The data come from the RNA Mapping Database (RMDB), library RFM100. Structure probing data (2A3) for a 177-nucleotide construct. The 2A3 profile rests on 1,004 reads. Values cover nucleotides 27 to 126. The reactions ran in a buffer of 150 mM KOAc, 10 mM MgCl2 and 150 mM bicine (pH 8.5), at 24 C.

[RMDB]
RNA sequence: GGGAACGACUCGAGUAGAGUCGAAAAACUCCAGGUUACGACCUGGAGAGGCUGCGAACUGUGGGGACGAUCUCCCCCUGCAGAUCCGGCCACGGCAAAUGCCGAAACCAUUUAGAGAGAAGGAGAAAAUGACAGGCAUCUUCGGAUGCCUGUCAUUAAAAGAAACAACAACAACAAC
Reactivity to 2A3 in 0.01 (KOAc 150mM, MgCl2 10mM, bicine 150mM(pH8.5), 24C), signal-to-noise 2, nucleotides 027 to 126: a000c000u000c000c000a020g010g000u140u040a220c300g040a020c130c000u000g010g000a000g000a000g000g000c000u000g080c140g110a080a020c030u000g000u040g000g000g000g000a040c020g020a080u000c010u030c000c000c000c000c000u000g030c010a000g000a010u000c020c020g000g000c000c000a000c010g000g000c020a170a240a200u250g000c000c000g020a060a000a000c040c010a070u070u170u160a100g030a020g050a020g080a140a120g030g020a030g040a040a210